Structure probing data (2A3 and DMS) for a 177-nucleotide construct. It was measured as part of the RMDB library OK2TRN. The 2A3 profile rests on 8,662 reads. Values cover nucleotides 27 to 126. 2A3 is a SHAPE reagent: it acylates the 2'-hydroxyl of flexible nucleotides of all four kinds. For 2A3 the reverse transcriptase was SuperScript II with manganese.

RNA sequence: GGGAACGACUCGAGUAGAGUCGAAAAGUUGGUCGAACCAGAGCAGCGGAUCUCAAAACGCCGCGGAGAAGUCAAACUUUCUUUAAGGCGGUGCCUGUCACCCAAUGAUGUGGUUAAUGUGGUUAACCACAUACUCUAAGUUCGCUUAGAGUAUGUGAAAAGAAACAACAACAACAAC
Reactivity to 2A3 in 0.01 (KOAc 150mM, MgCl2 10mM, bicine 150mM(pH8.5), 24C), signal-to-noise 6, nucleotides 027 to 126: g040u040u040g030g070u040c030g020a050a030c040c020a060g020a020g030c030a000g010c030g040g040a110u050c050u010c040a080a140a050a080c030g030c000c000g000c040g000g010a030g010a020a020g040u140c120a150a110a130c090u130u200u090c010u020u080u050a070a030g060g000c020g000g020u020g020c010c020u060g020u070c020a050c040c010c040a060a060u200g080a070u090g020u080g050g060u050u100a060a030u240g050u120g180g150u050u050a030a020c020
Reactivity to DMS in 0.01 (KOAc 150mM, MgCl2 10mM, bicine 150mM(pH8.5), 24C), signal-to-noise 9, nucleotides 027 to 126: g010u000u000g010g020u000c050g010a100a130c080c060a080g000a100g020c050a060g010c090g010g000a090u000c060u000c070a060a080a150a180c080g020c010c020g030c210g000g000a120g000a040a040g000u000c180a070a070a300c110u000u000u000c020u000u000u000a060a240g000g010c010g010g010u000g010c040c030u000g010u010c070a090c030c020c040a070a110u010g000a070u000g020u000g000g000u000u000a020a060u000g010u000g010g000u000u000a030a050c080